[RMDB]
Structure probing data (DMS and 2A3) for a 177-nucleotide construct. Source: RMDB library TTRDES, as collected in RNAgym. The DMS profile rests on 3,190 reads. Reactivities are rounded to 0.1 and cut off at 0 and 3. The RNA was probed in 150 mM KOAc, 10 mM MgCl2 and 150 mM bicine (pH 8.5) at 24 C.
RNA sequence: GGGAACGACUCGAGUAGAGUCGAAAAGAUAUGGAAACAUCCGUGAUCACUUUGAUCAUCUUUCGGAAACGAAAGAUGGGAGUGACCACGGAGUGUUUCCUAAGUCAAAGCAAGAGUUCGCUCUUGCCUAAGUAGCCCAGUUCGCUGGGCUACUUAGAAAAGAAACAACAACAACAAC
Reactivity to DMS in 0.01 (KOAc 150mM, MgCl2 10mM, bicine 150mM(pH8.5), 24C), signal-to-noise 3, nucleotides 027 to 126: g000a040u000a300u010g000g010a030a020a000c010a050u000c000c000g020u000g010a050u000c000a000c000u000u000u010g010a130u020c010a000u000c000u000u000u000c000g010g000a160a170a210c000g010a000a020a000g010a010u010g010g000g000a010g000u000g000a010c020c010a000c000g010g000a000g010u010g000u000u000u000c000c000u000a020a050g020u000c040a130a140a200g010c000a020a010g010a020g010u010u010c300g000c000u000c000u000u000g000c010
Reactivity to 2A3 in 0.01 (KOAc 150mM, MgCl2 10mM, bicine 150mM(pH8.5), 24C), signal-to-noise 2, nucleotides 027 to 126: g020a020u160a040u250g010g000a010a020a020c000a000u000c000c010g020u000g000a020u000c010a010c050u240u240u180g170a190u300c000a010u020c000u020u000u000c000g010g040a080a100a070c030g000a000a020a010g000a000u000g000g010g000a010g010u010g000a000c000c000a000c050g040g000a010g000u000g000u000u000u020c000c000u000a080a010g010u000c050a100a120a030g000c010a010a010g010a000g030u120u240c240g070c140u020c010u020u010g000c000